Structure probing data (DMS and 2A3) for a 177-nucleotide construct. For 2A3, 1,562 sequencing reads were counted. The data come from the RNA Mapping Database (RMDB), library TTRDES. Reactivities are given for positions 27 through 126. The DMS profile rests on 1,271 reads. The RNA was probed in 150 mM KOAc, 10 mM MgCl2 and 150 mM bicine (pH 8.5) at 24 C.
RNA sequence: GGGAACGACUCGAGUAGAGUCGAAAAGAUAUGGAGAUGGAAGGCUAGCUGCAUAUCGGAAACGAUAUGGUCAGCUUGGACCCUUCAUCUCCUAAGUCAAACUACCCGCCGUUCGCGGCGGGUAGAACAAUCAACUGUCCUUCGGGACAGUUGAUUGAAAAGAAACAACAACAACAAC
Reactivity to DMS in 0.01 (KOAc 150mM, MgCl2 10mM, bicine 150mM(pH8.5), 24C), signal-to-noise 1, nucleotides 027 to 126: g000a030u000a220u000g000g010a040g040a010u000g010g020a020a030g030g030c000u000a040g010c000u000g000c000a010u000a000u010c000g020g010a080a050a140c000g010a020u000a010u000g010g030u020c020a030g000c000u000u010g010g010a180c300c000c040u000u010c010a000u000c000u000c000c010u010a000a100g020u000c040a120a170a300c020u000a000c000c000c000g000c000c000g030u010u030c210g040c030g020g030c010g030g000g010u000a000g000a030a130
Reactivity to 2A3 in 0.01 (KOAc 150mM, MgCl2 10mM, bicine 150mM(pH8.5), 24C), signal-to-noise 1, nucleotides 027 to 126: g020a000u060a000u080g000g010a010g030a000u020g080g160a000a010g010g070c080u110a040g020c000u000g020c010a000u000a020u010c000g000g000a040a070a000c020g010a000u000a000u030g190g180u300c000a010g000c030u070u140g100g140a070c000c000c000u030u010c000a010u000c010u000c010c000u000a020a010g000u010c040a080a080a220c010u000a000c010c020c000g030c040c020g040u060u240c300g020c050g190g110c000g050g070g000u000a010g010a020a000